[RMDB]
RNA sequence: GGGAACGACUCGAGUAGAGUCGAAAAGAAGUCAGAGAAAAGAUGCGAAAAGAAAAGAAAACCGACCGAAAAAGCAUCGAAAAGUCGUGGAAAGGUCGGGAAACACGACGAAAUCUGACUGAAGAAAGGGUAAUCAUUAGUUCGCUAAUGAUUACCCAAAAGAAACAACAACAACAAC
Reactivity to 2A3 in 0.01 (KOAc 150mM, MgCl2 10mM, bicine 150mM(pH8.5), 24C), signal-to-noise 2, nucleotides 027 to 126: g080a060a000g000u000c000a000g000a000g020a040a070a040a040g010a010u000g010c020g020a030a040a190a080g110a050a160a030a000g110a010a060a000a000c000c000g000a000c000c010g130a090a040a110a010a000g020c000a000u010c010g010a000a000a000a060g000u000c000g000u010g050g040a130a060a010g010g000u000c000g000g000g000a050a050a000c000a010c000g000a010c000g010a020a010a020u010c000u010g000a000c020u010g030a050a010g020a080a020a020
Reactivity to DMS in 0.01 (KOAc 150mM, MgCl2 10mM, bicine 150mM(pH8.5), 24C), signal-to-noise 3, nucleotides 027 to 126: g010a170a010g000u000c010a000g000a020g000a060a100a110a110g000a000u000g020c000g020a160a140a100a140g000a140a050a120a130g000a090a050a070a150c000c000g000a010c000c000g070a070a060a050a200a130g000c010a000u000c000g000a040a030a070a150g000u000c000g020u010g010g000a070a080a110g000g000u000c000g000g010g000a030a060a020c020a000c030g000a000c000g000a050a100a100u000c000u010g010a000c020u030g010a070a110g000a060a040a060